[RMDB]
RNA sequence: GGGAACGACUCGAGUAGAGUCGAAAAGGUCAUCGACCAAUCUUGACCGUUCAAGUUCAAUAUAUGUCCUUUGUCGUCGUAUAGACGUAUAGAUAAUUUUUCAAUGUCUACUGGUCCAUGAUAUUCGCGCGCAUAUUGAUUUUUGUCGCUAAAAAAAGUGUGGUACAGUCUUCGGACUGUACCACACAAAAGAAACAACAACAACAAC
Reactivity to 2A3 in 0.01 (KOAc 150mM, MgCl2 10mM, bicine 150mM(pH8.5), 24C), signal-to-noise 1, nucleotides 027 to 156: g110g030u010c010a050u010c140g000a020c000c040a000a020u090c030u100u120g020a020c040c040g030u090u170c060a000a100g030u060u010c120a110a000u090a030u020a000u150g160u160c030c020u030u150u290g110u020c080g000u030c000g050u190a030u110a300g000a000c010g030u030a070u000a010g030a000u040a000a170u180u140u030u080u120c120a050a100u010g050u060c000u000a050c050u090g010g040u000c070c000a030u100g100a010u090a110u130u190c100g000c020g000c000g010c050a000u050a050u120u140g090a050u220u130u050u060u050g080u090c000g000c000u080a000a060a000a000a000a120a120